[RMDB]
RNA sequence: GGGAACGACUCGAGUAGAGUCGAAAAAUGCAUUUAAACUUCACCCCGUUGCAUAAGCAAGUAGCUAUCAGGACUCAGUAGGUAAGUGGAUAAUGUGAUGGCGUUUGGAGCGAAAGGUACUGGGUUCCAGUCCUGCCUACUUCGGUAGGCAGGACUGAAAAGAAACAACAACAACAAC
Reactivity to 2A3 in 0.01 (KOAc 150mM, MgCl2 10mM, bicine 150mM(pH8.5), 24C), signal-to-noise 2, nucleotides 027 to 126: a000u060g050c060a030u060u090u300a210a130a090c300u270u000c090a140c000c100c000c030g050u000u000g000c230a060u050a240a000g050c000a000a050g100u110a000g170c060u020a000u110c000a060g000g010a040c050u000c080a090g000u000a090g130g120u140a120a040g070u030g130g070a130u140a210a000u130g010u060g040a000u090g000g000c000g110u230u080u040g080g000a050g000c060g050a070a050a000g300g000u000a000c010u000g000g110g000u000u000c000
Reactivity to DMS in 0.01 (KOAc 150mM, MgCl2 10mM, bicine 150mM(pH8.5), 24C), signal-to-noise 1, nucleotides 027 to 126: a060u030g000c080a130u000u070u040a020a110a110c040u010u000c140a070c170c080c000c000g000u020u080g000c060a160u000a090a120g030c020a010a040g040u000a090g010c030u000a000u060c140a090g030g000a080c110u010c100a080g070u000a020g020g070u020a010a110g000u000g040g000a070u080a040a090u000g040u020g000a050u000g000g010c050g030u010u000u000g010g000a030g080c110g000a050a060a140g000g030u030a000c120u050g000g000g000u000u040c050
Chemical mapping of a 177-nucleotide RNA with 2A3 and DMS. Conditions: 150 mM KOAc, 10 mM MgCl2 and 150 mM bicine (pH 8.5), 24 C. It was measured as part of the RMDB library OK1LIB. 2A3 adducts were read by reverse transcription with SuperScript II with manganese. The DMS profile rests on 1,233 reads. For 2A3, 422 sequencing reads were counted.